[RMDB]
RNA sequence: GGGAACGACUCGAGUAGAGUCGAAAAACUAAAAGGCAUCAAAUGACUAAAAGACAUUGAAAAACUAAACACCACUUCAUAUGUGUUCUUGGUGACAAGGCUUUUGUUCUGCAUAACCAACCAAGUAUGCUGUUUACAUCGUUUCCAACUGCCCAACCUUUAUCGAAGGUUUCGACCUUCGAUAAAGAAAAGAAACAACAACAACAAC
Reactivity to 2A3 in 0.01 (KOAc 150mM, MgCl2 10mM, bicine 150mM(pH8.5), 24C), signal-to-noise 3, nucleotides 027 to 156: a000c050u100a060a040a010a000g000g030c020a020u020c050a080a050a110u100g040a040c020u150a040a020a060a060g050a010c040a050u080u120g070a070a070a050a040a000c050u050a090a050a030c030a030c010c050a020c030u070u050c090a060u130a070u190g030u000g040u080u050c020u020u040g000g000u030g020a030c010a050a040g030g000c020u050u060u110u070g060u060u020c030u060g010c020a040u030a080a080c020c020a010a040c010c010a060a000g010u020a030u070g030c030u040g060u020u030u040a040c050a050u030c060g010u000u050u000c030c030a070a050c050u070g000c000c010c000a000a050c000
Reactivity to DMS in 0.01 (KOAc 150mM, MgCl2 10mM, bicine 150mM(pH8.5), 24C), signal-to-noise 2, nucleotides 027 to 156: a140c090u030a020a070a090a060g070g020c040a110u010c050a090a110a110u020g010a140c010u020a040a030a120a040g010a030c040a080u000u010g010a040a020a050a080a100c030u010a060a030a110c030a050c090c020a060c100u000u000c130a110u000a040u010g020u000g000u000u000c060u020u000g010g020u010g030a130c090a090a100g000g010c030u030u000u000u000g000u000u000c050u020g020c020a100u010a020a070c020c050a130a100c040c020a050a160g030u000a120u000g030c020u000g010u000u010u000a060c080a090u020c030g010u000u000u020c000c010a060a130c100u000g000c030c000c040a090a180c050
This 207-nucleotide RNA was probed chemically with 2A3 and DMS. Conditions: 150 mM KOAc, 10 mM MgCl2 and 150 mM bicine (pH 8.5), 24 C. DMS adducts were read by reverse transcription with MarathonRT. The DMS profile rests on 2,313 reads.